Overview: The data come from the RNA Mapping Database (RMDB), library 15KLIB. An RNA of 170 nucleotides, treated with 2A3 and DMS and read out base by base.

RNA sequence: GGGAACGACUCGAGUAGAGUCGAAAAGUUUCUUGAUCUUCUUCUUUGUCUUCCGGAGCUCCGCCUCGAGUUCCUCCGCUUUCUUUCUUCCACUCACCCACUUCUCGAGAAUAUCUUCUCUUCCAUCAUACUUAACCGUUCGCGGUUAAGAAAAGAAACAACAACAACAAC
Reactivity to 2A3 in 0.01 (KOAc 150mM, MgCl2 10mM, bicine 150mM(pH8.5), 24C), signal-to-noise 9, nucleotides 027 to 129: g010u010u020u010c000u010u050g070a100u020c010u060u010c000u080u010c010u060u110u090g070u040c020u080u020c040c020g030g010a020g010c010u010c010c010g060c010c010u020c020g010a020g020u040u030c010c010u010c010c020g030c020u030u070u020c000u020u030u010c000u040u020c010c010a040c020u030c010a070c000c010c000a030c020u070u020c010u010c020g040a040g030a080a060u100a060u100c020u050u010c010u000c000u050u020c040c010a110u100c020a040u080a180
Reactivity to DMS in 0.01 (KOAc 150mM, MgCl2 10mM, bicine 150mM(pH8.5), 24C), signal-to-noise 9, nucleotides 027 to 129: g030u000u000u000c010u000u000g040a050u000c000u030u010c050u020u030c080u020u010u030g030u010c050u020u000c040c030g000g000a100g020c020u010c000c020g010c020c010u000c050g010a070g030u020u020c030c020u030c050c070g020c040u020u030u030c040u030u040u020c030u000u000c020c000a060c030u040c050a050c040c030c030a060c070u000u000c010u000c050g020a090g000a070a120u030a080u000c060u030u010c000u030c080u000u000c040c050a110u050c070a070u000a160
The reactions ran in a buffer of 150 mM KOAc, 10 mM MgCl2 and 150 mM bicine (pH 8.5), at 24 C. Values cover nucleotides 27 to 129. 2A3 adducts were read by reverse transcription with SuperScript II with manganese.